RNA sequence: GGGAACGACUCGAGUAGAGUCGAAAAAUCACGCUCGAACGGAUAUUGCGGAUCGUUGUCGAAGAUCGCCGAGGCGCGCCGGAUCGCCUGCGGGCCGAAGCGUGCGCCGGGCCGGUUGGAAACGGCACAUAGCGCUGAGCUUCGGCUCAGCGCUAUGAAAAGAAACAACAACAACAAC
Reactivity to DMS in 0.01 (KOAc 150mM, MgCl2 10mM, bicine 150mM(pH8.5), 24C), signal-to-noise 1, nucleotides 027 to 126: a100u020c050a070c080g010c020u000c050g030a050a070c080g030g000a080u000a050u010u000g010c040g000g000a070u000c030g010u000u000g020u010c010g050a200a180g010a040u000c050g020c030c010g020a150g010g010c030g010c110g020c020c020g000g010a200u000c170g000c010c000u020g020c080g010g000g040c020c020g000a100a070g010c080g050u020g000c070g000c000c030g020g020g000c060c020g020g000u010u010g000g000a080a090a130c050g010g000c010a190
Chemical mapping of a 177-nucleotide RNA with DMS.
For DMS the reverse transcriptase was MarathonRT.
Values cover nucleotides 27 to 126.